[RMDB]
RNA sequence: GGGAACGACUCGAGUAGAGUCGAAAAGAAGCGGCGAAAAAUGCGUGUAAAUAAAAGGUCAAUAUGACCUGACAGUGAUACCAAAUUAAAUGGGUCGAAGUCUCGCCAAAAUUCGCAACAAAUAGAAUGAUUUUAUAGGUUUCGACCUAUAAAAUCAAAAAGAAACAACAACAACAAC
Reactivity to 2A3 in 0.01 (KOAc 150mM, MgCl2 10mM, bicine 150mM(pH8.5), 24C), signal-to-noise 1, nucleotides 027 to 126: g110a030a000g170c170g000g050c020g000a020a010a020a040a000u090g010c040g000u090g000u070a170a210a150u090a010a120a090a000g010g000u040c020a080a080u170a210u300g000a010c000c000u000g010a000c000a000g080u050g140a010u200a300c000c020a000a030a070u150u150a130a120a090u050g000g000g010u010c020g000a030a000g000u000c000u010c020g000c010c000a000a010a010a010u020u020c010g000c020a040a040c050a020a180a050u120a020g120a010a110
Reactivity to DMS in 0.01 (KOAc 150mM, MgCl2 10mM, bicine 150mM(pH8.5), 24C), signal-to-noise 2, nucleotides 027 to 126: g020a110a150g020c300g010g040c020g000a000a010a120a060a300u020g010c040g020u030g020u000a040a040a090u000a090a040a070a020g000g000u000c010a120a140u040a080u010g000a000c010c000u000g010a040c050a040g010u080g000a010u000a100c010c000a030a110a100u000u000a080a090a100u010g010g000g020u000c000g000a120a150g000u000c020u000c000g000c030c110a070a030a090a070u000u010c030g000c010a080a050c080a040a080a100u040a050g000a070a180